[RMDB]
RNA sequence: GGGAACGACUCGAGUAGAGUCGAAAACAUCCAGCAGGGGCUUGAAGCGCUUAGGCUGUCCACCGAUAAUGGCAUACGCAAUUGGCAGUCCCUUCUGGGCGACCUUAAUGGUGGACUCGACAUUGCCGCUAAAUUUACCUUUCGAGGUAAAUUUAGCAAAAGAAACAACAACAACAAC
Reactivity to 2A3 in 0.01 (KOAc 150mM, MgCl2 10mM, bicine 150mM(pH8.5), 24C), signal-to-noise 9, nucleotides 027 to 126: c010a020u040c000c000a000g010c030a010g020g010g020g030c020u130u240g170a160a040g010c040g030c060u130u120a070g090g000c050u060g010u010c000c000a010c000c020g030a040u130a210a110u180g060g000c050a060u080a120c040g010c030a050a240u130u110g160g010c030a010g010u040c000c000c000u010u020c020u020g010g010g000c040g040a100c000c020u070u140a100a040u200g020g000u000g000g000a010c010u010c080g070a080c040a150u060u160g060c050c040
Reactivity to DMS in 0.01 (KOAc 150mM, MgCl2 10mM, bicine 150mM(pH8.5), 24C), signal-to-noise 4, nucleotides 027 to 126: c160a110u060c000c010a030g020c100a030g010g000g010g000c020u010u010g030a100a090g000c140g020c110u010u010a050g000g010c020u030g060u000c010c020a020c020c020g010a110u020a100a090u010g000g000c040a060u040a090c090g010c020a080a130u040u060g030g010c150a040g000u010c010c000c030u010u010c040u000g000g000g000c070g000a170c030c030u000u040a040a120u050g010g000u000g000g000a050c020u010c070g020a100c140a060u030u040g010c060c110